[RMDB]
RNA sequence: GGGAACGACUCGAGUAGAGUCGAAAAGCACGUCCGGUAAGACCCGUGCGAACACUUGAGCUCCGGCUUGACCGCUCUUGUGGAUUAGGACGUUCUAGCUCCGGCUUGGCCGCUAGUUCGUCCGAAACGAUUUACCUCGUUUCGACGAGGUAAAUCGAAAAGAAACAACAACAACAAC
Reactivity to DMS in 0.01 (KOAc 150mM, MgCl2 10mM, bicine 150mM(pH8.5), 24C), signal-to-noise 4, nucleotides 027 to 126: g010c000a030c030g010u030c090c040g020g010u030a140a110g010a300c070c050c020g000u000g000c010g010a100a110c030a040c020u020u000g000a030g000c080u000c100c060g000g000c100u030u020g000a100c060c030g040c010u020c010u000u000g020u000g010g000a130u010u040a110g010g000a030c000g020u000u000c010u000a010g010c030u040c130c030g000g020c090u040u020g040g000c100c080g000c010u000a000g020u000u000c010g020u000c000c000g000a060a070a130
Reactivity to 2A3 in 0.01 (KOAc 150mM, MgCl2 10mM, bicine 150mM(pH8.5), 24C), signal-to-noise 8, nucleotides 027 to 126: g020c010a000c030g030u070c070c030g030g030u110a080a050g110a150c020c010c010g000u020g010c020g030a080a010c030a000c010u000u020g010a000g010c030u070c120c070g060g000c050u200u240g100a300c020c020g000c000u000c000u020u010g010u010g030g040a060u050u210a060g000g010a000c000g000u010u000c000u000a010g000c030u060c090c030g180g040c120u140u220g140g010c030c020g000c010u000a010g000u000u000c000g000u010c000c000g000a000a010a000